This 177-nucleotide RNA was probed chemically with 2A3 and DMS. It was measured as part of the RMDB library OK2TRN. The 2A3 profile rests on 43,241 reads. Values are in units of 0.01, from 0 to 300, in steps of 10.
RNA sequence: GGGAACGACUCGAGUAGAGUCGAAAACACCGGAUCGCCGCCGACGUCAAGGGCAGCCAGCUCGGUCUGCCGGAGGUGACGCUGGGUCUGCUGCCGGGUGGCGGUGGGGUGACCCGCACGGUACGGACAUUCAUUAGUACUUCGGUACUAAUGAAUGAAAAGAAACAACAACAACAAC
Reactivity to 2A3 in 0.01 (KOAc 150mM, MgCl2 10mM, bicine 150mM(pH8.5), 24C), signal-to-noise 9, nucleotides 027 to 126: c010a010c010c010g140g110a060u050c010g010c020c010g020c010c010g130a190c050g110u150c100a070a070g070g010g000c000a000g030c040c040a010g010c010u050c050g060g060u040c080u150g050c020c010g120g070a160g020g050u070g030a020c050g010c060u070g010g010g060u070c030u030g010c010u010g000c000c000g110g000g010u020g010g000c020g000g010u050g030g120g000g000u010g020a070c000c010c000g010c030a090c070g070g050u140a040c050g030g030a020
Reactivity to DMS in 0.01 (KOAc 150mM, MgCl2 10mM, bicine 150mM(pH8.5), 24C), signal-to-noise 9, nucleotides 027 to 126: c050a080c050c000g010g000a040u000c020g020c010c010g020c010c010g010a100c110g000u010c150a110a160g010g010g010c000a020g010c070c090a090g010c040u000c050g020g000u000c060u010g040c010c010g010g010a130g020g020u000g010a030c130g010c020u000g010g000g000u010c040u000g000c030u000g010c010c010g010g010g020u000g010g010c010g010g020u000g010g000g000g010u000g000a140c020c000c000g010c080a090c090g000g010u000a060c090g000g010a300
High DMS reactivity at an A or C suggests that its Watson-Crick edge is free.
For DMS the reverse transcriptase was MarathonRT.